[RMDB]
RNA sequence: GGGAACGACUCGAGUAGAGUCGAAAAGCGGCGCCGAACCUUGCGGCGGCGCAGACGGAGCCGCCCGCGCGCGACAUGGACGGCGACAUCUCGAAGGUAAGCCUGGAGGUCUUCAAGGAGAUGCGCGUGAAGAACCGCGUGAUGUUCUCGGCGGGCACGUAUCGAAGGAUUUCGAUCCUUCGAUACGAAAAGAAACAACAACAACAAC
Reactivity to 2A3 in 0.01 (KOAc 150mM, MgCl2 10mM, bicine 150mM(pH8.5), 24C), signal-to-noise 1, nucleotides 027 to 156: g000c030g210g000c000g000c010c000g050a100a160c000c070u100u150g030c000g000g020c000g000g040c010g000c000a020g050a030c090g110g000a070g030c030c020g020c000c050c010g030c020g000c000g010c010g040a020c010a160u180g080g100a030c030g060g020c010g100a190c000a050u020c080u010c010g040a010a000g000g020u150a070a060g030c010c050u190g090g040a170g210g000u120c000u020u000c000a070a130g170g010a010g000a000u040g020c000g000c030g070u040g030a100a090g040a130a040c030c010g000c000g040u070g060a130u060g110u250u000c010u010c020g080g010c010g000g020g000c080a000
This 207-nucleotide RNA was probed chemically with 2A3. The 2A3 profile rests on 629 reads. Conditions: 150 mM KOAc, 10 mM MgCl2 and 150 mM bicine (pH 8.5), 24 C. 2A3 adducts were read by reverse transcription with SuperScript II with manganese.